[RMDB]
About this RNA:
Structure probing data (DMS and 2A3) for a 177-nucleotide construct. Conditions: 150 mM KOAc, 10 mM MgCl2 and 150 mM bicine (pH 8.5), 24 C. It was measured as part of the RMDB library OK2TST. For 2A3, 3,697 sequencing reads were counted. For DMS the reverse transcriptase was MarathonRT.
RNA sequence: GGGAACGACUCGAGUAGAGUCGAAAAGCAUCACCGGCAGCGCCUGCGGCAGGAUCACCAGGCGCAAUACCUGCCACGGCCGCAGUCCGAGCGCGCGGGCGGCCGCCCACUGCCCGGCGGGGAGGCAUAGCGUAUUAAUGUUCGCAUUAAUACGCUAAAAAGAAACAACAACAACAAC
Reactivity to DMS in 0.01 (KOAc 150mM, MgCl2 10mM, bicine 150mM(pH8.5), 24C), signal-to-noise 5, nucleotides 027 to 126: g000c060a060u000c050a090c090c030g020g010c040a120g010c030g030c180c020u010g030c060g000g020c050a070g000g010a110u000c120a140c190c050a060g000g010c040g010c110a060a050u010a080c040c030u000g000c030c070a160c060g010g000c030c030g020c030a060g000u000c010c020g000a130g010c040g020c050g020c030g010g000g020c010g010g000c030c050g020c030c020c020a300c050u000g000c000c000c010g000g010c000g010g010g020g000a080g000g010c100a170
Reactivity to 2A3 in 0.01 (KOAc 150mM, MgCl2 10mM, bicine 150mM(pH8.5), 24C), signal-to-noise 2, nucleotides 027 to 126: g030c010a060u110c040a050c070c040g070g000c060a030g010c010g040c010c030u060g010c040g010g000c040a060g020g090a070u120c040a030c140c010a020g050g000c050g000c030a010a020u120a070c000c010u010g050c020c010a070c090g050g000c030c020g010c010a020g090u080c060c030g030a040g040c050g000c020g000c030g010g000g010c000g010g010c000c010g070c000c000c000a030c010u020g010c010c000c010g040g000c060g010g000g020g010a040g000g020c040a080